[RMDB]
Structure probing data (DMS and 2A3) for a 177-nucleotide construct. Values cover nucleotides 27 to 126. For 2A3, 18,190 sequencing reads were counted. 2A3 adducts were read by reverse transcription with SuperScript II with manganese.
RNA sequence: GGGAACGACUCGAGUAGAGUCGAAAAAGCUGCUCGUAAUCGCGCCAAAGGACCGGCGUAGCGCGCGGCGCUAACUGCUCAGGUUGCAAAAAUAGGUCCUUUAUGGAGCAGCCAUAGCAGAUUUACAACUCGUAUUAGUAUUCGUACUAAUACGAGUAAAAGAAACAACAACAACAAC
Reactivity to DMS in 0.01 (KOAc 150mM, MgCl2 10mM, bicine 150mM(pH8.5), 24C), signal-to-noise 9, nucleotides 027 to 126: a130g010c000u000g010c000u000c030g010u000a080a080u010c180g010c060g010c020c010a050a080a050g000g000a010c000c000g000g010c010g020u000a060g010c020g020c080g020c150g020g010c010g010c050u000a040a080c040u010g010c010u000c170a160g000g010u000u000g020c050a030a060a040a060a050u000a090g010g000u000c000c000u000u000u000a040u000g010g010a130g010c010a020g010c010c040a070u000a060g010c050a060g000a150u000u000u010a090c200a120
Reactivity to 2A3 in 0.01 (KOAc 150mM, MgCl2 10mM, bicine 150mM(pH8.5), 24C), signal-to-noise 6, nucleotides 027 to 126: a000g010c010u010g000c010u000c010g030u040a080a110u160c100g010c010g000c040c000a100a100a010g010g000a000c010c010g010g000c010g000u010a020g010c000g000c020g030c050g120g000c000g000c020u050a140a090c020u050g010c020u020c070a070g100g020u070u080g040c050a080a070a010a040a120u080a040g000g000u010c000c020u010u010u000a100u040g060g000a040g000c000a000g000c000c000a020u030a010g000c020a010g040a190u130u150u170a110c090a110